[RMDB]
RNA sequence: GGGAACGACUCGAGUAGAGUCGAAAAGUAGGGCAAACACAUGCGCGUCGCGUAGCCCGUGUUUCGACGCCAGCCCAUCGAAAGAUUCGGUUCGACAAUGUAGCUCUCGAUUAUCUUUACGGCAAUUUCAGUGACGUCAACGUAUGGUCUUAACGCGACGGACCACAGGUUUCGACCUGUGGUCCGUAAAAGAAACAACAACAACAAC
Reactivity to 2A3 in 0.01 (KOAc 150mM, MgCl2 10mM, bicine 150mM(pH8.5), 24C), signal-to-noise 2, nucleotides 027 to 156: g090u160a050g090g040g050c060a050a060a000c090a030c050a100u140g080c080g000c000g010u010c000g010c000g030u020a010g000c010c030c040g000u010g030u020u090u040c020g000a000c010g000c040c010a020g000c010c000c030a040u100c110g070a020a000a000g030a000u000u050c030g000g060u020u100c050g000a050c110a250a070u300g070u090a070g010c000u000c040u060c000g000a010u110u030a030u100c050u000u050u050a090c040g020g000c010a040a130u100u150u080c040a020g040u010g110a080c010g000u020c030a020a040c010g110u110a100u230g050g000u050c030u000u100a040a000c000g000c000g010

Chemical mapping of a 207-nucleotide RNA with 2A3. As a SHAPE reagent, 2A3 marks flexible, mostly unpaired nucleotides at the ribose 2'-OH. Source: RMDB library OK3TST, as collected in RNAgym. The reactions ran in a buffer of 150 mM KOAc, 10 mM MgCl2 and 150 mM bicine (pH 8.5), at 24 C.